An RNA of 177 nucleotides, treated with DMS and read out base by base. High DMS reactivity at an A or C suggests that its Watson-Crick edge is free. For DMS the reverse transcriptase was MarathonRT.
RNA sequence: GGGAACGACUCGAGUAGAGUCGAAAAGAUAUGGAGUGGCCCGCGUCAUCGAUCUAGGGCCGUGUCGUAACAUCAUUCGGAAACGAAUGUGGACACGGCCCUAGGGAGACGCUCCACUCCUAAGUCACGAAGAAACUUACUUCGGUAAGUUUCUUCGAAAAGAAACAACAACAACAAC
Reactivity to DMS in 0.01 (KOAc 150mM, MgCl2 10mM, bicine 150mM(pH8.5), 24C), signal-to-noise 1, nucleotides 027 to 126: g000a070u000a300u000g000g000a000g020u000g000g040c230c180c300g000c000g030u030c040a220u000c180g020a160u030c010u000a010g010g020g050c010c000g020u000g020u000c000g020u000a150a180c160a020u010c020a020u010u030c000g010g000a100a050a260c020g030a050a000u000g020u000g020g000a020c000a020c000g010g020c000c030c000u000a010g010g000g010a020g000a040c000g020c010u030c010c010a010c020u010c000c000u000a000a040g000u010c050a290